[RMDB]
Chemical mapping of a 177-nucleotide RNA with 2A3 and DMS. The RNA was probed in 150 mM KOAc, 10 mM MgCl2 and 150 mM bicine (pH 8.5) at 24 C. It was measured as part of the RMDB library TTRDEL. In probing experiments dimethyl sulfate is read out at A N1 and C N3, which are open when not base-paired.
RNA sequence: GGGAACGACUCGAGUAGAGUCGAAAAGAUAUGGACCUAAUCUCGCUGAGCGUACGUUGAAAUCGGAAACGAUGGAGUACCCAGCGAUCUUAGGUCCUAAGUCAAAAGAGCGACUUCGGUCGCUCAAGUUAUAUGUUUUCUUCGGAAAACAUAUAACAAAAGAAACAACAACAACAAC
Reactivity to 2A3 in 0.01 (KOAc 150mM, MgCl2 10mM, bicine 150mM(pH8.5), 24C), signal-to-noise 5, nucleotides 027 to 126: g030a020u080a050u180g000g000a000c000c000u010a010a000u010c000u010c010g000c010u040g080a120g160c200g030u000a000c010g170u300u060g040a030a030a000u010c010g010g040a070a050a030c010g010a010u010g000g010a020g000u010a000c000c000c010a000g020c000g000a000u000c000u000u000a000g020g000u000c000c000u000a000a000g010u000c010a000a000a100a150g010a000g010c010g000a000c000u060u140c300g150g000u000c000g000c000u000c000a000a000
Reactivity to DMS in 0.01 (KOAc 150mM, MgCl2 10mM, bicine 150mM(pH8.5), 24C), signal-to-noise 6, nucleotides 027 to 126: g010a050u010a300u010g010g000a000c000c000u000a000a000u000c130u000c000g010c000u000g000a080g010c220g020u010a010c020g000u000u030g010a090a170a020u000c010g000g000a140a080a170c010g000a020u000g000g000a100g010u000a000c000c000c000a000g010c010g000a000u000c120u000u000a000g010g000u010c000c000u000a000a070g010u000c030a070a080a120a150g000a020g010c000g010a010c000u000u010c200g020g020u000c000g020c000u000c010a000a050